An RNA of 177 nucleotides, treated with DMS and 2A3 and read out base by base. For 2A3 the reverse transcriptase was SuperScript II with manganese. The reactions ran in a buffer of 150 mM KOAc, 10 mM MgCl2 and 150 mM bicine (pH 8.5), at 24 C. The DMS profile rests on 6,033 reads. For DMS the reverse transcriptase was MarathonRT. For 2A3, 4,342 sequencing reads were counted.
[RMDB]
RNA sequence: GGGAACGACUCGAGUAGAGUCGAAAACGUAAUGACCAUUAAAGCUGGUGACAUUACGUAAGGUAGGUAUCAGUAAAACUUUACUGAUAGAAGGGAUACUAGUGGCAACGGUGCCAUAUAAACGGGACAAUGUAUCAUCGUUCGCGAUGAUACAUUGAAAAGAAACAACAACAACAAC
Reactivity to DMS in 0.01 (KOAc 150mM, MgCl2 10mM, bicine 150mM(pH8.5), 24C), signal-to-noise 6, nucleotides 027 to 126: c000g020u000a000a000u000g000a090c010c000a010u000u010a080a120a170g030c300u000g000g000u000g020a190c010a000u000u000a000c010g010u000a040a100g010g000u000a070g010g010u000a010u000c000a010g000u000a000a020a190a190c290u020u000u000a010c000u000g010a000u000a020g010a080a100g000g000g000a190u000a060c170u010a110g020u000g000g010c030a050a120c260g010g010u010g010c000c000a010u000a070u000a020a070a090c130g000g000g010a250
Reactivity to 2A3 in 0.01 (KOAc 150mM, MgCl2 10mM, bicine 150mM(pH8.5), 24C), signal-to-noise 3, nucleotides 027 to 126: c000g000u000a010a000u000g020a020c020c010a020u070u250a180a080a010g140c080u020g000g060u050g120a070c000a010u000u000a010c020g000u020a020a030g080g040u090a030g040g080u020a000u010c010a010g000u010a010a000a060a210c090u190u060u030a000c000u000g000a000u000a000g060a060a040g030g020g000a010u060a120c040u070a100g030u010g030g010c010a080a090c170g200g050u090g010c010c000a000u030a000u010a050a070a020c040g020g010g010a010